The data come from the RNA Mapping Database (RMDB), library TTRDEL. The record gives the reactivity of an RNA of 177 nucleotides to 2A3 and DMS.
RNA sequence: GGGAACGACUCGAGUAGAGUCGAAAAGAUAUGGAGCGAACUACAGGAACUGAGGGACGUUGAAAUCGGAAACGAUGGAGUCCCGCGGUUCCUGCGCUCCUAAGUCAAAGAGGCGUUCGCGCCUCAAGAUCUAUGCAGGGUUCGCCCUGCAUAGAUCAAAAGAAACAACAACAACAAC
Reactivity to 2A3 in 0.01 (KOAc 150mM, MgCl2 10mM, bicine 150mM(pH8.5), 24C), signal-to-noise 1, nucleotides 027 to 126: g010a020u110a030u150g000g010a000g000c000g000a060a060c110u170a030c300a010g010g000a000a010c000u000g000a070g040g030g010a000c020g170u300u090g060a040a050a000u010c000g040g040a070a030a050c020g000a010u020g000g020a000g000u000c000c000c000g010c000g010g000u010u000c010c000u010g000c010g000c000u020c020c000u030a080a030g000u020c030a090a090a050g000a010g020g000c000g010u000u120c260g030c000g060c120c000u010c000a000a010
Reactivity to DMS in 0.01 (KOAc 150mM, MgCl2 10mM, bicine 150mM(pH8.5), 24C), signal-to-noise 2, nucleotides 027 to 126: g000a020u010a300u000g000g000a020g010c000g010a070a040c090u010a300c010a010g010g000a050a000c000u010g010a050g030g000g010a000c000g020u000u010g000a080a160a000u000c010g010g000a130a030a270c030g030a010u000g000g000a080g010u000c000c000c000g000c020g010g000u000u000c000c000u000g030c030g000c000u000c000c000u000a000a070g000u000c020a100a120a090g000a000g010g010c000g020u000u000c140g010c010g000c000c000u020c010a030a060
The RNA was probed in 150 mM KOAc, 10 mM MgCl2 and 150 mM bicine (pH 8.5) at 24 C. For DMS the reverse transcriptase was MarathonRT. For 2A3, 2,756 sequencing reads were counted.